Source: RMDB library OK2TRN, as collected in RNAgym. This 177-nucleotide RNA was probed chemically with DMS and 2A3. 2A3 adducts were read by reverse transcription with SuperScript II with manganese.
[RMDB]
RNA sequence: GGGAACGACUCGAGUAGAGUCGAAAAUCAUACUGUGCAGGGAUGAGCAGCAGUAUGACAUGUUCACGGAGGAGGUCAAGGUUCCUAGAGGGAUGCAGGUGGACAUGUGCAUCACACAUAGACUGUACGAUAUACGGGGAUUCGUCCCCGUAUAUCGAAAAGAAACAACAACAACAAC
Reactivity to DMS in 0.01 (KOAc 150mM, MgCl2 10mM, bicine 150mM(pH8.5), 24C), signal-to-noise 5, nucleotides 027 to 126: u000c000a010u000a030c010u000g030u000g030c040a130g000g000g020a080u010g010a140g020c030a130g000c010a010g000u000a010u000g000a040c110a060u010g010u000u000c030a070c070g010g010a110g010g010a090g000g000u000c060a070a100g020g010u000u000c030c010u000a080g010a140g010g000g000a060u000g010c040a070g020g000u000g010g010a060c070a030u000g010u010g010c040a050u010c070a080c100a070c130a060u010a130g000a100c070u000g010u000a140
Reactivity to 2A3 in 0.01 (KOAc 150mM, MgCl2 10mM, bicine 150mM(pH8.5), 24C), signal-to-noise 3, nucleotides 027 to 126: u040c000a020u010a030c000u020g000u040g040c040a110g000g130g210a150u110g040a070g060c030a000g000c000a010g020u010a010u010g000a000c000a030u090g020u050u050c020a010c070g050g060a120g040g040a030g050g000u070c030a040a040g040g030u060u030c010c000u030a070g030a070g110g050g010a010u060g010c050a010g080g050u030g060g000a010c010a020u040g030u030g030c020a030u040c020a010c010a010c020a050u060a050g110a080c080u100g050u180a050